Chemical mapping of a 207-nucleotide RNA with 2A3. For 2A3 the reverse transcriptase was SuperScript II with manganese. It was measured as part of the RMDB library M2RFPK. For 2A3, 905 sequencing reads were counted. Values cover nucleotides 27 to 156.
RNA sequence: GGGAACGACUCGAGUAGAGUCGAAAAGCUUCCUCUUGGCGCGGAGGUUUAACUGCGCUCGCUCCUCAUAUCGGUGUGGGCGCACCGGAUUUACAAAUUAAAGUCCUUUAGGGAGCGGAAAGGGACAAAAACUUGCACGUGUUCGCACGUGCAAGAACCCCUAUUAAGGCUUCGGCCUUAAUAGGGGAAAAGAAACAACAACAACAAC
Reactivity to 2A3 in 0.01 (KOAc 150mM, MgCl2 10mM, bicine 150mM(pH8.5), 24C), signal-to-noise 1, nucleotides 027 to 156: g030c010u050u060c010c010u000c030u000u060g030g000c030g000c020g030g020a020g030g040u010u220u090a040a030c080u060g000c010g020c000u000c010g000c000u020c000c010u100c040a120u090a120u250c010g000g020u010g000u030g000g060g000c000g000c010a000c000c000g050g010a020u180u160u180a060c190a040a050a000u050u080a110a100a000g010u000c000c010u000u020u060a040g000g010g000a020g020c040g000g010a090a030a010g040g000g010a030c060a020a100a030a030a060c010u000u000g010c020a000c000g000u000g040u030u020c050g080c090a000c000g010u000g000c000a000a000g000a000a000